[RMDB]
RNA sequence: GGGAACGACUCGAGUAGAGUCGAAAACUCAUAAGUAAUCCUCAUUUCAAAUUAAUAUUUAAUUGCUAUAUAAGUUAUAACUGCUUAUAUCAUGAGUUUAAACCUAUGAGUAAGUCCCAGGUCAAUGGCCUAAUGCUAUAUUCGUAUAGCAUUAGGCAAAAGAAACAACAACAACAAC
Reactivity to DMS in 0.01 (KOAc 150mM, MgCl2 10mM, bicine 150mM(pH8.5), 24C), signal-to-noise 1, nucleotides 027 to 126: c000u020c000a020u000a050a040g020u000a130a110u000c080c000u000c000a000u000u020u100c070a090a020a010u000u020a020a060u100a250u070u060u020a010a000u000u010g000c050u060a020u000a000u000a010a000g000u000u010a120u030a120a100c200u030g010c000u000u000a010u000a000u010c300a030u000g000a040g000u000u000u000a010a040a070c020c090u000a010u000g000a000g060u010a050a060g020u000c000c040c000a100g000g000u010c100a100a090u050g000
Reactivity to 2A3 in 0.01 (KOAc 150mM, MgCl2 10mM, bicine 150mM(pH8.5), 24C), signal-to-noise 3, nucleotides 027 to 126: c000u020c000a000u000a000a010g040u030a030a070u060c010c000u010c000a000u020u140u120c040a040a030a120u060u130a070a080u120a200u280u160u210a070a080u090u040g000c000u000a000u000a000u000a040a010g000u120u050a290u060a300a080c060u150g010c000u000u020a000u010a000u040c050a040u020g010a000g030u000u050u060a140a180a030c000c000u000a000u000g000a000g000u040a030a000g060u000c000c010c040a030g090g020u050c060a030a030u000g060
The record gives the reactivity of an RNA of 177 nucleotides to DMS and 2A3.
Values are in units of 0.01, from 0 to 300, in steps of 10.
For 2A3, 891 sequencing reads were counted.
DMS (dimethyl sulfate) methylates the pairing face of unpaired adenines and cytosines.
The RNA was probed in 150 mM KOAc, 10 mM MgCl2 and 150 mM bicine (pH 8.5) at 24 C.
For DMS the reverse transcriptase was MarathonRT.
Values cover nucleotides 27 to 126.